[RMDB]
RNA sequence: GGGAACGACUCGAGUAGAGUCGAAAAGCGCACGCCACCACACCCAGCUAAUUUUUGUAUUUUUAGUGGAGACGGGGUUUCACCAUGUUGGUCAGGGUCAUCUCUAUCUCUUGAUCUCGUGAUCCGCUCGUCUAUGUCAGUUCGCUGACAUAGACGAAAAAGAAACAACAACAACAAC
Reactivity to DMS in 0.01 (KOAc 150mM, MgCl2 10mM, bicine 150mM(pH8.5), 24C), signal-to-noise 2, nucleotides 027 to 126: g020c090g020c050a050c070g020c020c000a070c020c010a030c070a100c040c010c010a150g020c020u010a040a040u000u010u000u010u000g010u010a020u000u000u010u000u000a060g020u000g020g010a040g020a080c060g010g010g010g000u000u000u000c050a040c030c050a090u010g000u000u010g020g010u000c050a080g000g010g010u000c150a060u000c090u000c110u000a060u000c030u010c010u010u000g010a060u000c050u010c080g040u010g000a070u000c000c040g010c060
Reactivity to 2A3 in 0.01 (KOAc 150mM, MgCl2 10mM, bicine 150mM(pH8.5), 24C), signal-to-noise 2, nucleotides 027 to 126: g000c000g000c000a020c030g040c010c010a010c000c040a000c010a000c020c010c010a040g000c040u070a080a180u030u050u070u070u200g070u040a170u050u070u020u010u070a040g000u060g080g030a020g010a020c040g010g010g000g000u000u030u050c020a020c010c020a070u070g070u060u100g050g060u020c000a010g000g000g040u050c010a140u030c080u040c000u050a140u090c040u000c000u050u070g030a020u040c040u050c040g020u020g070a110u030c010c000g010c030
Description: The record gives the reactivity of an RNA of 177 nucleotides to DMS and 2A3. For DMS, 2,673 sequencing reads were counted. It was measured as part of the RMDB library OK2TRN. 2A3 adducts were read by reverse transcription with SuperScript II with manganese. The 2A3 profile rests on 1,821 reads. The RNA was probed in 150 mM KOAc, 10 mM MgCl2 and 150 mM bicine (pH 8.5) at 24 C. DMS (dimethyl sulfate) methylates the pairing face of unpaired adenines and cytosines.